[RMDB]
RNA sequence: GGGAACGACUCGAGUAGAGUCGAAAAGUGACAAAAUCAGAAAUCCUAUCAAAGUUUCUGUGACUGCUUUUAGGAAAGAGAGGCUUAUUUUUGUAUUAACUAUCAAAUGGAACCAUUCAAUGCUAGCGAACGUUAAGCUCUUCGGAGCUUAACGUUCAAAAGAAACAACAACAACAAC
Reactivity to DMS in 0.01 (KOAc 150mM, MgCl2 10mM, bicine 150mM(pH8.5), 24C), signal-to-noise 2, nucleotides 027 to 126: g000u020g010a110c090a040a000a150a060u070c040a040g010a020a090a040u050c040c180u040a040u000c220a100a220a110g010u000u000u030c020u030g010u000g000a240c080u000g020c020u000u000u040u000a050g020g010a040a010a090g000a060g000a050g000g050c090u020u080a020u030u010u000u000u010g000u000a010u010u000a140a060c170u030a010u020c120a040a060a060u000g000g010a040a270c030c140a040u000u040c120a160a100u010g000c020u000a040g000c280
Reactivity to 2A3 in 0.01 (KOAc 150mM, MgCl2 10mM, bicine 150mM(pH8.5), 24C), signal-to-noise 3, nucleotides 027 to 126: g000u020g020a010c030a040a080a060a050u120c000a000g050a030a040a030u130c020c040u140a150u160c150a070a110a070g010u010u020u000c040u060g110u110g100a070c080u060g060c000u000u040u030u180a020g050g060a020a080a000g070a040g010a020g050g000c040u040u060a060u050u070u010u020u020g030u020a090u060u080a120a030c060u020a030u190c050a080a010a020u070g100g000a050a050c020c000a020u110u070c070a050a130u130g090c000u020a010g000c010
Conditions: 150 mM KOAc, 10 mM MgCl2 and 150 mM bicine (pH 8.5), 24 C. The record gives the reactivity of an RNA of 177 nucleotides to DMS and 2A3. DMS adducts were read by reverse transcription with MarathonRT. 2A3 is a SHAPE reagent: it acylates the 2'-hydroxyl of flexible nucleotides of all four kinds. The DMS profile rests on 1,286 reads. Values cover nucleotides 27 to 126.